An RNA of 207 nucleotides, treated with 2A3 and read out base by base. Values cover nucleotides 27 to 156. For 2A3, 546 sequencing reads were counted. Conditions: 150 mM KOAc, 10 mM MgCl2 and 150 mM bicine (pH 8.5), 24 C.
[RMDB]
RNA sequence: GGGAACGACUCGAGUAGAGUCGAAAAGACUAUCUUACAGAAGACACAGUUAAUUCUAAAUGAUCUUCUAAGCCAUACAGAUCUACAGUAUUUACAGAAAUUAUAUUUAUUCCUCCUACCAUUCUUUGAAAUUCUGUUUAACUCAUGUUCUGUUAGAAGUAUUAUCGCUGUUCGCAGCGAUAAUACUAAAAGAAACAACAACAACAAC
Reactivity to 2A3 in 0.01 (KOAc 150mM, MgCl2 10mM, bicine 150mM(pH8.5), 24C), signal-to-noise 2, nucleotides 027 to 156: g060a000c030u090a110u140c020u080u120a090c020a050g020a020a020g030a010c020a000c000a070g050u050u060a100a160u300u060c060u130a060a190a160u060g000a070u000c000u010u040c020u080a040a000g010c000c060a040u090a170c040a040g000a070u000c020u050a010c000a040g090u060a250u120u080u000a020c000a040g120a020a020a010u180u070a110u090a090u300u270u040a120u150u150c020c030u130c000c010u020a120c000c050a100u080u200c030u090u100u110g070a060a090a070u050u020c000u040g040u050u000u020a010a020c030u040c050a020u090g070u030u030c010u000g020u020u010a030g050a120